RNA sequence: GGGAACGACUCGAGUAGAGUCGAAAAACAAGCUCCAGUCUCAGAUUGUAACUGGCCUUUUUAAAGAUUGCUCUAGAGAAACUUCUGGCCUCUCACCUGCUUAUGCACCAACAUAUGUUAGUGUUGACUAUGCGAGUAAGUUCGCUUACUCGCAUAGAAAAGAAACAACAACAACAAC
Reactivity to 2A3 in 0.01 (KOAc 150mM, MgCl2 10mM, bicine 150mM(pH8.5), 24C), signal-to-noise 1, nucleotides 027 to 126: a030c010a000a070g040c000u000c040c000a030g010u030c040u010c020a080g030a210u090u110g050u000a070a000c030u020g030g000c000c000u170u090u030u000u120a120a140a040g070a190u110u100g050c030u020c040u110a000g000a030g010a120a130a020c010u070u080c040u050g000g040c020c000u000c000u010c000a050c000c000u020g020c010u110u120a040u090g020c000a000c050c030a120a020c010a040u080a080u160g020u000u070a060g000u000g040u060u020g000a020
Reactivity to DMS in 0.01 (KOAc 150mM, MgCl2 10mM, bicine 150mM(pH8.5), 24C), signal-to-noise 2, nucleotides 027 to 126: a050c100a130a070g010c050u000c030c000a050g010u000c040u010c040a070g000a100u000u000g000u000a050a070c050u000g000g020c260c020u020u000u010u010u010a060a100a100g020a070u000u000g010c040u000c040u000a080g000a130g000a110a090a090c050u000u000c030u020g000g020c010c020u000c020u000c050a070c030c060u000g000c040u020u010a080u000g010c050a070c060c020a020a060c090a070u020a050u000g020u000u000a040g020u010g000u010u000g010a210
Chemical mapping of a 177-nucleotide RNA with 2A3 and DMS.
Conditions: 150 mM KOAc, 10 mM MgCl2 and 150 mM bicine (pH 8.5), 24 C.